[RMDB]
Background: The record gives the reactivity of an RNA of 207 nucleotides to 2A3. Conditions: 150 mM KOAc, 10 mM MgCl2 and 150 mM bicine (pH 8.5), 24 C. For 2A3 the reverse transcriptase was SuperScript II with manganese.

RNA sequence: GGGAACGACUCGAGUAGAGUCGAAAAUUGGCACUGCCGGUGGGGUCGGUGCCCCCGGUGCAUUUCUCCCCGCUUUGGGUGCAUUGGCAGGCGGUGUGACCUUUGGGCGCGCAUUAAACUCGCCGUUCAUAGGGAACUGGCUUGCGCGUAACGCAGGCUCACAAAAGCGUUUCGACGCUUUUGUGAGAAAAGAAACAACAACAACAAC
Reactivity to 2A3 in 0.01 (KOAc 150mM, MgCl2 10mM, bicine 150mM(pH8.5), 24C), signal-to-noise 2, nucleotides 027 to 156: u070u030g040g000c000a010c050u050g000c000c050g060g080u210g020g080g020g030u100c070g080g030u090g020c020c000c010c010c020g050g010u040g020c030a070u070u240u030c080u140c010c020c020c050g050c000u030u120u170g060g000g000u040g000c030a040u010u080g070g000c100a020g000g040c050g060g050u020g020u020g070a090c010c000u040u020u010g050g000g000c020g000c000g000c020a010u050u230a130a090a100c040u090c050g030c000c000g020u000u010c010a040u140a130g140g070g000a010a010c060u120g090g020c010u030u000g000c060g000c020g040u030a090a030c050g040c060a020g030g080